[RMDB]
Annotation:
Chemical mapping of a 177-nucleotide RNA with 2A3 and DMS. For 2A3, 2,462 sequencing reads were counted. For 2A3 the reverse transcriptase was SuperScript II with manganese. For DMS, 2,745 sequencing reads were counted.
RNA sequence: GGGAACGACUCGAGUAGAGUCGAAAAAAAGUUAGCGUAGUAGAGUCGCCGUGAGUACGCUAUGGUUCCGUGAGACUCUACUCGAGCGUAUCACGGAACCCACGUACAUACCGUACGUGCUAUAAAAUAGAAUCAAAUCUUUCGAGAUUUGAUUCUAAAAAGAAACAACAACAACAAC
Reactivity to 2A3 in 0.01 (KOAc 150mM, MgCl2 10mM, bicine 150mM(pH8.5), 24C), signal-to-noise 2, nucleotides 027 to 126: a000a000a070g110u010u000a010g000c030g000u000a020g040u030a050g100a050g100u050c030g010c120c020g070u070g020a050g110u020a010c000g010c000u000a030u050g070g020u060u000c020c010g000u030g010a060g000a000c000u000c000u010a010c000u000c000g000a010g000c020g000u010a060u050c000a000c010g020g010a000a020c000c020c000a000c000g020u000a000c000a020u170a190c070c130g000u000a010c000g020u000g000c020u130a190u180a170a100a040a010
Reactivity to DMS in 0.01 (KOAc 150mM, MgCl2 10mM, bicine 150mM(pH8.5), 24C), signal-to-noise 3, nucleotides 027 to 126: a080a040a070g010u010u000a030g020c000g010u000a020g000u020a150g000a130g000u000c030g010c050c020g030u000g010a160g000u000a010c020g020c010u000a030u000g010g010u000u000c020c030g000u000g000a200g020a030c000u000c010u000a020c020u000c020g010a010g010c080g000u000a070u000c010a060c030g010g010a040a030c050c060c010a010c000g000u000a010c010a110u000a090c300c170g010u010a000c010g000u000g020c090u000a070u000a060a060a120a160